RNA sequence: GGGAACGACUCGAGUAGAGUCGAAAAAAGGUUUGUCACAGUGGACUCAGAUGCAGCAAAGGCUUCAUGCAUUCAGGAUGCCUAUUGUUGAUUAAUAGCUACCUGAUCCUAAUAGUAGAAAGGACCAACCCUGUAAACAGUUCGCUGUUUACAGGGUAAAAGAAACAACAACAACAAC
Reactivity to 2A3 in 0.01 (KOAc 150mM, MgCl2 10mM, bicine 150mM(pH8.5), 24C), signal-to-noise 2, nucleotides 027 to 126: a000a010g040g010u050u030u060g060u050c020a040c010a070g060u060g050g010a020c050u010c050a030g000a090u070g030c010a010g000c020a050a000a030g040g010c010u000u050c020a040u110g110c000a080u130u260c030a030g020g070a020u040g020c010c000u090a240u080u010g030u000u040g030a010u010u130a060a090u070a060g030c000u010a040c000c000u010g010a020u020c020c000u080a140a170u040a110g020u030a030g030a100a090a030g060g010a000c020c000a010
Reactivity to DMS in 0.01 (KOAc 150mM, MgCl2 10mM, bicine 150mM(pH8.5), 24C), signal-to-noise 4, nucleotides 027 to 126: a070a070g010g020u000u020u000g020u010c050a060c060a100g000u000g000g010a080c150u000c080a120g020a060u010g010c030a060g030c040a040a030a100g000g010c020u000u000c050a070u000g020c270a090u000u000c080a060g000g030a090u000g010c060c040u020a070u010u000g020u010u000g000a120u000u000a050a070u000a050g000c050u000a190c020c010u000g010a050u000c020c020u000a080a090u020a060g000u000a030g010a050a110a080g010g000a060c070c050a070